[RMDB]
RNA sequence: GGGAACGACUCGAGUAGAGUCGAAAAGAUAUGGACCAAUCUCAUCGAUCGACGGGUCGGAAACGACCCUGGGUCGGGAGACUGGUCCUAAGUCAAAGCACUCGCACGGUUCGCCGUGCGAGUGCAACAAUUACUAGUACUUCGGUACUAGUAAUUGAAAAGAAACAACAACAACAAC
Reactivity to DMS in 0.01 (KOAc 150mM, MgCl2 10mM, bicine 150mM(pH8.5), 24C), signal-to-noise 2, nucleotides 027 to 126: g000a040u000a300u000g000g010a010c000c000a010a030u000c010u000c000a060u010c010g000a020u000c000g000a280c250g000g010g010u000c010g020g010a090a080a250c010g000a000c000c000c000u000g000g000g010u000c000g000g000g000a010g000a010c050u010g020g000u000c000c000u000a010a060g000u000c020a100a100a190g000c010a000c000u000c000g000c000a020c000g000g000u010u010c180g030c010c020g000u000g010c000g010a010g000u010g000c020a010a040
Reactivity to 2A3 in 0.01 (KOAc 150mM, MgCl2 10mM, bicine 150mM(pH8.5), 24C), signal-to-noise 2, nucleotides 027 to 126: g030a030u070a040u130g000g000a010c000c000a010a000u000c000u020c010a300u230c040g030a010u000c020g090a090c180g050g000g010u020c030g010g010a100a100a010c020g010a030c000c030c040u030g020g000g010u010c020g000g010g000a010g000a000c000u020g020g000u010c000c000u010a020a000g020u010c040a080a130a070g000c020a000c000u000c040g240c010a020c030g060g070u100u130c300g060c190c010g000u010g000c040g020a000g010u000g010c010a000a000